[RMDB]
RNA sequence: GGGAACGACUCGAGUAGAGUCGAAAAGAUAUGGACGUCUUUGGGAGGGAGCUCUGUCGGAAACGACUGAGCAUCGAUCUCCGACGUCCUAAGUCAAAACCUCACUAUCGUUCGCGAUAGUGAGGAAGCAAGCAUAAGGGUUCGCCCUUAUGCUUGCAAAAGAAACAACAACAACAAC
Reactivity to 2A3 in 0.01 (KOAc 150mM, MgCl2 10mM, bicine 150mM(pH8.5), 24C), signal-to-noise 2, nucleotides 027 to 126: g020a020u040a030u080g000g000a000c000g000u020c110u260u300u300g120g010g010a030g070g240g010a010g000c000u030c040u070g010u010c020g000g000a030a040a040c010g000a010c010u010g010a000g000c010a150u140c030g080a100u020c000u000c010c000g000a000c000g000u000c000c020u000a070a000g030u010c020a010a030a050a220c010c000u000c000a010c000u010a010u000c010g020u130u040c300g000c010g200a010u010a000g010u010g000a000g000g000a000a000
Reactivity to DMS in 0.01 (KOAc 150mM, MgCl2 10mM, bicine 150mM(pH8.5), 24C), signal-to-noise 1, nucleotides 027 to 126: g000a010u000a300u010g020g000a020c000g000u000c000u020u000u010g030g010g010a050g060g010g000a060g000c000u000c040u000g010u000c020g010g000a040a070a150c000g000a020c000u000g000a010g040c020a120u020c080g000a130u000c000u020c000c120g000a010c020g010u010c000c000u000a000a040g060u000c010a120a080a060a160c010c010u000c000a000c000u000a010u000c000g020u010u010c250g030c010g040a000u000a000g000u000g010a000g010g000a020a040